[RMDB]
RNA sequence: GGGAACGACUCGAGUAGAGUCGAAAAGAUAUGGAGGGAGGAAGACUUGGAUUUAUAUGUUCCCUAUACUCGGAAACGAGUAUACCAACAUAUUGUCAGUCUUACCCUCCCUCCUAAGUCAAACAUAGAGCAAGGCGUUCGCGCCUUGCUCUAUGAACUUGAAUUUGAGAUUCGUCUCAAAUUCAAGAAAAGAAACAACAACAACAAC
Reactivity to 2A3 in 0.01 (KOAc 150mM, MgCl2 10mM, bicine 150mM(pH8.5), 24C), signal-to-noise 3, nucleotides 027 to 156: g010a010u080a020u140g000g000a010g020g010g010a010g010g020a030a010g010a010c020u120u170g130g020a060u210u300u030a030u020a000u000g000u000u000c010c000c000u000a000u000a000c000u000c000g020g000a050a090a040c000g010a000g000u000a010u010a000c040c050a010a000c000a000u010a000u000u020g020u010c010a000g010u000c010u020u080a120c000c000c000u010c000c010c000u010c000c000u000a010a000g000u000c000a000a030a020c010a000u010a000g000a010g000c010a000a010g020g000c000g040u110u110c190g050c020g020c080c000u000u010g000c000u000c000u000a000u000g000a000a000
Reactivity to DMS in 0.01 (KOAc 150mM, MgCl2 10mM, bicine 150mM(pH8.5), 24C), signal-to-noise 2, nucleotides 027 to 156: g000a100u000a240u000g010g000a020g030g000g000a030g050g000a070a030g020a040c000u000u010g050g010a060u000u000u000a010u010a020u010g010u000u000c060c010c010u010a000u000a000c000u000c000g010g010a200a170a290c010g010a010g020u000a010u000a010c010c030a020a030c000a030u000a010u000u000g000u010c020a050g000u000c000u010u010a090c180c000c000u000c000c000c000u000c000c000u000a010a070g020u000c070a110a110a220c010a010u000a010g010a020g020c010a040a000g020g000c000g020u000u010c300g030c030g020c030c010u000u000g000c000u010c000u000a000u010g000a050a100
Structure probing data (2A3 and DMS) for a 207-nucleotide construct.
The RNA was probed in 150 mM KOAc, 10 mM MgCl2 and 150 mM bicine (pH 8.5) at 24 C.
Reactivities are given for positions 27 through 156.
For 2A3 the reverse transcriptase was SuperScript II with manganese.
The DMS profile rests on 5,418 reads.